[RMDB]
RNA sequence: GGGAACGACUCGAGUAGAGUCGAAAAUCAUUUUCCAUCAAAGGCUCCUAUGGAGGCAGCUUGUACUCAAGCUGUUCUUGUUUGGGCAUGGAAAAGUCUGAUUUAGAAUCCAGAGGUAAAGCCGGGAUGAUACUGCAUCAUUCGUGAUGCAGUAUCAAAAAGAAACAACAACAACAAC
Reactivity to DMS in 0.01 (KOAc 150mM, MgCl2 10mM, bicine 150mM(pH8.5), 24C), signal-to-noise 5, nucleotides 027 to 126: u030c060a080u000u000u010u000c000c000a090u000c160a090a100a200g010g000c010u000c010c030u000a030u000g030g010a030g000g020c000a000g010c000u010u000g020u020a180c300u010c010a010a010g010c000u000g010u000u000c010u010u000g010u010u010u000g010g010g010c020a090u000g010g000a040a040a040a040g020u000c150u010g000a030u000u000u010a080g000a110a130u000c010c010a060g020a090g010g000u000a050a080a120g020c030c010g000g010g010a180
Reactivity to 2A3 in 0.01 (KOAc 150mM, MgCl2 10mM, bicine 150mM(pH8.5), 24C), signal-to-noise 3, nucleotides 027 to 126: u060c000a010u010u040u010u000c030c010a040u080c080a150a100a070g110g000c010u020c060c000u060a070u060g090g000a020g030g000c000a000g000c000u030u020g020u170a190c060u040c220a000a000g010c000u010g020u190u070c000u000u030g040u000u040u060g010g000g000c000a020u060g050g040a070a100a000a030g090u020c120u080g040a040u000u050u140a070g040a030a050u010c020c020a020g020a040g160g020u090a130a060a040g030c000c000g000g020g010a030